[RMDB]
RNA sequence: GGGAACGACUCGAGUAGAGUCGAAAAUCGCUGGACACGAAAUAGUUUGUGAGCACUCCGGGUAGCACAUAUAUCACUCUUCACGAUAUUAAUCGGAUCUUGGCGGCUAAAUGAUGAAGAUCCCACCGGUACGAUUAAUCUUCGGAUUAAUCGUACCAAAAGAAACAACAACAACAAC
Reactivity to DMS in 0.01 (KOAc 150mM, MgCl2 10mM, bicine 150mM(pH8.5), 24C), signal-to-noise 2, nucleotides 027 to 126: u020c020g040c100u010g000g000a080c140a180c030g030a030a150a170u010a180g000u000u000u000g020u000g000a080g000c160a090c050u000c020c070g000g000g030u000a030g010c100a050c080a080u020a140u050a120u000c030a140c140u000c010u040u000c030a020c050g020a050u020a080u000u000a160a040u020c060g020g000a080u010c050u000u000g040g010c090g000g000c000u000a060a040a130u020g020a070u010g000a050a040g010a180u000c000c000c020a100c230c100
Reactivity to 2A3 in 0.01 (KOAc 150mM, MgCl2 10mM, bicine 150mM(pH8.5), 24C), signal-to-noise 1, nucleotides 027 to 126: u060c010g000c040u020g060g020a010c010a000c110g060a070a060a060u110a040g100u020u070u130g070u010g070a020g070c010a000c070u030c040c010g040g000g040u040a030g090c080a010c060a080u170a010u020a020u090c010a010c090u000c010u110u000c040a010c010g000a010u010a030u070u120a120a060u050c010g000g010a020u030c010u060u170g040g010c010g000g000c000u000a030a090a010u070g050a050u050g010a020a010g010a050u040c000c010c000a020c040c020
The data come from the RNA Mapping Database (RMDB), library RFMREP. This 177-nucleotide RNA was probed chemically with DMS and 2A3. For DMS, 738 sequencing reads were counted. The 2A3 profile rests on 1,327 reads.